[RMDB]
RNA sequence: GGGAACGACUCGAGUAGAGUCGAAAAGGGCAGCUAGGCUCGGCAGCCGGGUACGAGUGUUAGGAGUCGGGGUGACUGCACCGAACGAGCCGGGGGCGCUCAGCAAGGGCGACGGCCCGAAUGCGGAGCGUCUACCUAAUUUCGAUUAGGUAGACGCAAAAGAAACAACAACAACAAC
Reactivity to 2A3 in 0.01 (KOAc 150mM, MgCl2 10mM, bicine 150mM(pH8.5), 24C), signal-to-noise 9, nucleotides 027 to 126: g020g010g000c030a050g020c070u100a060g040g030c000u000c010g030g010c030a040g040c020c020g020g010g010u090a080c060g020a090g090u090g060u140u190a080g030g070a070g030u060c020g010g020g000g040u070g040a060c020u040g010c030a050c010c020g010a050a040c030g010a010g030c000c000g000g000g010g040g040c030g000c010u010c020a040g050c070a050a140g020g000g000c020g020a100c040g100g020c000c000c010g020a060a040u140g020c020g030g020a040
Reactivity to DMS in 0.01 (KOAc 150mM, MgCl2 10mM, bicine 150mM(pH8.5), 24C), signal-to-noise 9, nucleotides 027 to 126: g000g000g000c020a090g010c040u010a070g010g000c010u000c010g000g020c050a080g010c030c020g000g010g020u010a060c060g000a110g020u020g010u020u030a100g010g010a110g020u010c040g010g000g000g020u010g000a110c050u010g020c040a090c070c060g020a090a170c030g000a050g010c020c000g000g000g000g010g010c030g010c010u010c020a140g020c140a100a120g000g000g010c010g010a100c180g000g000c010c010c000g010a040a050u020g010c020g000g010a220